[RMDB]
RNA sequence: GGGAACGACUCGAGUAGAGUCGAAAACUCGGACAUGCCUGCUGCCCACAUGACCUUCCUGCGCCAUCGCCUCUUUUUGGUGCCUGUGGGUGAGGAGGGAAAUGCUAACCCCACCCACCGCCUCCUCAAUACCCAGCAAAUUCGUUUGCUGGGUAUUAAAAGAAACAACAACAACAAC
Reactivity to 2A3 in 0.01 (KOAc 150mM, MgCl2 10mM, bicine 150mM(pH8.5), 24C), signal-to-noise 3, nucleotides 027 to 126: c010u000c030g020g040a020c020a030u100g040c010c030u020g020c010u060g000c020c020c000a090c000a070u100g040a090c010c020u040u020c020c010u070g000c010g050c000c020a060u080c020g040c030c010u080c020u090u120u020u070u100g040g000u010g030c030c050u050g010u030g020g000g000u010g020a080g020g070a130g000g050g090a080a200a070u160g020c030u050a100a110c020c000c000c010a020c010c000c000a000c010c010g020c000c000u010c000c010u040c010
Reactivity to DMS in 0.01 (KOAc 150mM, MgCl2 10mM, bicine 150mM(pH8.5), 24C), signal-to-noise 4, nucleotides 027 to 126: c050u000c030g030g010a110c110a080u000g010c040c010u000g020c050u000g010c030c010c030a090c090a080u000g010a120c060c030u000u000c030c010u000g020c060g000c030c050a040u000c080g000c060c040u010c060u000u010u010u010u000g020g020u000g010c140c100u010g030u000g000g010g010u010g020a050g020g010a290g010g010g000a050a080a080u010g010c190u010a100a160c040c000c000c010a040c020c010c000a030c030c100g020c030c020u000c010c000u000c160